Structure probing data (2A3) for a 207-nucleotide construct. 2A3 adducts were read by reverse transcription with SuperScript II with manganese.
RNA sequence: GGGAACGACUCGAGUAGAGUCGAAAACCAUCGACUGUCACCAGAUGCUGCAUCACCUGAUCACUGAUGGCUCAACGGUAUCCGGCGGUACAGCUGAAUACUUGUAGCUGCCUUUUGAGCGGGUUGGAAAAUCGGAGGUUGUUCGCAACCUCCGAAAGAGUGGUCGUAUGUUCGCAUACGACCACUCAAAAGAAACAACAACAACAAC
Reactivity to 2A3 in 0.01 (KOAc 150mM, MgCl2 10mM, bicine 150mM(pH8.5), 24C), signal-to-noise 2, nucleotides 027 to 156: c020c000a080u120c040g100a100c040u060g000u150c040a040c040c000a020g010a050u040g050c080u000g030c000a060u000c010a040c020c000u020g020a060u070c010a020c040u030g040a050u050g080g070c040u020c050a080a040c010g000g000u010a020u000c000c040g000g020c010g010g100u150a130c040a030g000c000u010g010a060a020u120a130c050u090u180g030u060a010g020c040u020g020c000c000u070u110u060u160g050a030g020c070g000g060g010u060u020g050g030a100a050a020a090u000c000g000g000a020g000g020u000u030g020u070u030c080g010c080a000a000c030c000u030c000c000g000a000a000a000